[RMDB]
RNA sequence: GGGAACGACUCGAGUAGAGUCGAAAACUCUUUUACUCGGCAUGAUACCACCGUUAUCGGGUCAACAGAGUAGUUGCAAAUGACAACAAGGCUCAGGGUUAUGCUCUCGCUGCCUAAUGGCGGUGCGCGGACGACUCAAUGUUCGCAUUGAGUCGAAUGUAUGUGACAUCUUCGGAUGUCACAUACAAAAAGAAACAACAACAACAAC
Reactivity to DMS in 0.01 (KOAc 150mM, MgCl2 10mM, bicine 150mM(pH8.5), 24C), signal-to-noise 1, nucleotides 027 to 156: c040u010c020u020u000u010u000a050c080u000c050g000g040c050a110u030g040a120u000a150c020c010a270c020c000g020u000u010a060u010c000g050g000g000u000c000a050a020c150a050g010a090g060u000a020g010u000u030g020c020a020a190a160u050g020a170c060a070a080c030a020a100g000g000c000u030c040a090g020g010g000u020u020a140u000g000c050u000c040u000c000g040c070u000g030c010c010u050a050a070u040g010g020c090g000g020u000g000c070g030c050g020g000a260c020g010a010c000u000c010a020a000u000g000u000u010c300g020c040a000u000u000g010a000g000u000c000g000a010a000
Reactivity to 2A3 in 0.01 (KOAc 150mM, MgCl2 10mM, bicine 150mM(pH8.5), 24C), signal-to-noise 2, nucleotides 027 to 156: c030u020c040u000u130u050u110a130c060u020c040g030g000c030a040u080g040a020u080a110c000c020a000c000c010g120u030u080a050u100c030g000g000g020u070c000a060a060c040a050g050a010g050u080a040g010u040u020g000c030a130a140a250u170g040a230c000a030a010c000a040a000g100g000c040u050c040a040g000g090g000u140u140a050u220g000c010u000c000u000c020g020c030u000g000c000c000u110a200a110u200g010g050c000g030g000u010g010c000g040c030g020g100a040c010g000a000c000u000c000a000a000u030g000u080u120c200g030c070a000u000u000g010a000g040u000c000g000a030a010